Structure probing data (2A3 and DMS) for a 177-nucleotide construct. For 2A3 the reverse transcriptase was SuperScript II with manganese. Reactivities are given for positions 27 through 126. Source: RMDB library OK1LIB, as collected in RNAgym.
RNA sequence: GGGAACGACUCGAGUAGAGUCGAAAAGCGGCAGGGCAUUGCUGCGGGCGUGACGGGGACCACGACGGCGUCACCCCUCGAGAAGGUCCCAUGCACUGUCGGUUGUGGAGCGGCGAGGCGGUUUGCCCUCCGGGUACUAUUUCGAUAGUACCCGGAGAAAAGAAACAACAACAACAAC
Reactivity to 2A3 in 0.01 (KOAc 150mM, MgCl2 10mM, bicine 150mM(pH8.5), 24C), signal-to-noise 3, nucleotides 027 to 126: g040c010g040g030c020a010g020g010g000c040a050u000u170g030c040u100g020c060g010g020g010c070g010u020g010a030c040g020g000g010g060a020c020c020a050c050g090a030c050g050g050c000g030u030c010a070c050c010c000c000u040c050g150a160g010a100a020g010g000u030c000c000c000a000u040g010c010a000c020u050g000u050c010g010g020u020u100g060u060g030g030a050g010c010g000g000c020g010a040g000g000c000g030g040u050u090u090g080c010c010
Reactivity to DMS in 0.01 (KOAc 150mM, MgCl2 10mM, bicine 150mM(pH8.5), 24C), signal-to-noise 3, nucleotides 027 to 126: g010c040g000g010c020a030g000g000g000c050a070u040u020g030c090u000g030c160g010g010g040c180g000u010g000a040c060g030g020g000g010a100c020c040a090c050g030a090c140g020g010c060g000u010c070a090c050c030c000c010u000c050g010a080g010a130a200g000g000u000c020c020c030a120u010g000c050a050c020u030g020u000c030g010g050u010u000g000u010g000g010a080g010c050g010g020c050g000a090g010g000c010g010g000u000u010u010g010c030c040